[RMDB]
RNA sequence: GGGAACGACUCGAGUAGAGUCGAAAAAUGCCGCAUUCAGGGACGGUUACUCUAGUGGGCGACUGUCCAUCUAGCGUUGACAUCUACAUACUAUAUAGUAAUACCAAUACUCAAGACUACGAAACGGAUCAGUAGUGGAUUUCGAUCCACUACUGAUAAAAGAAACAACAACAACAAC
Reactivity to DMS in 0.01 (KOAc 150mM, MgCl2 10mM, bicine 150mM(pH8.5), 24C), signal-to-noise 3, nucleotides 027 to 126: a040u030g000c030c010g000c080a080u020u010c160a090g000g050g000a050c060g000g010u000u000a120c010u000c010u040a090g030u040g020g000g010c020g010a050c060u010g000u000c030c070a000u070c020u000a060g000c030g020u010u040g010a140c110a130u010c060u010a100c130a120u050a090c120u020a190u030a130u030a050g020u010a020a110u010a110c050c060a060a050u010a050c070u000c090a090a060g000a050c110u000a110c060g010a050a080a090c070g000g020
Reactivity to 2A3 in 0.01 (KOAc 150mM, MgCl2 10mM, bicine 150mM(pH8.5), 24C), signal-to-noise 7, nucleotides 027 to 126: a000u110g010c010c000g060c020a070u110u130c080a060g010g000g020a010c000g020g000u020u010a010c000u010c020u070a070g050u250g040g010g000c050g070a110c070u130g000u000c000c000a020u060c030u030a010g010c000g030u030u110g020a060c020a050u020c040u060a050c010a130u100a080c030u060a070u090a050u060a230g080u090a080a050u020a130c020c030a060a060u040a080c010u010c090a080a060g070a080c050u060a050c100g060a080a090a030c070g050g000

Structure probing data (DMS and 2A3) for a 177-nucleotide construct. Values cover nucleotides 27 to 126. For 2A3, 6,090 sequencing reads were counted. Source: RMDB library OK1LIB, as collected in RNAgym. For DMS the reverse transcriptase was MarathonRT. Conditions: 150 mM KOAc, 10 mM MgCl2 and 150 mM bicine (pH 8.5), 24 C.